The data come from the RNA Mapping Database (RMDB), library M2PK50. This 177-nucleotide RNA was probed chemically with DMS and 2A3. For DMS, 749 sequencing reads were counted. The 2A3 profile rests on 1,763 reads.

RNA sequence: GGGAACGACUCGAGUAGAGUCGAAAAGUGCAGCAGUUCGCUGCUGCACAAAAGGCAUCGUAUCAUUGCUUCGAAGCCAUACUAGAAACUAGAAAGCAGUGAAAAGACACUUCUUCGGAAGUGUCAACUGCUCUCAUAGCUUCGGCUAUGAGAGCAGAAAAGAAACAACAACAACAAC
Reactivity to DMS in 0.01 (KOAc 150mM, MgCl2 10mM, bicine 150mM(pH8.5), 24C), signal-to-noise 1, nucleotides 027 to 126: g000u000g000c020a000g000c010a020g000u000u010c290g010c000u010g000c000u000g010c000a000c010a040a050a120a050g000g020c010a070u040c070g020u000a040u000c040a110u000u000g040c000u000u010c020g040a030a010g040c020c050a110u010a210c110u000a210g010a080a070a130c090u000a080g000a050a060a000g030c000a000g000u010g000a160a060a070a030g000a000c000a030c000u000u000c000u000u000c200g020g010a000a000g000u000g000u000c000a020a000
Reactivity to 2A3 in 0.01 (KOAc 150mM, MgCl2 10mM, bicine 150mM(pH8.5), 24C), signal-to-noise 1, nucleotides 027 to 126: g020u010g000c000a020g010c000a000g000u010u120c160g010c140u020g000c000u000g000c000a000c010a010a100a000a020g000g000c010a020u050c040g030u070a050u140c010a020u030u000g000c000u030u020c000g060a040a000g000c000c000a030u020a100c030u030a060g150a160a180a040c010u040a050g120a090a090a000g030c000a010g020u020g110a060a070a020a060g000a000c000a000c000u000u030c000u010u030c160g060g000a000a010g000u000g000u000c000a000a010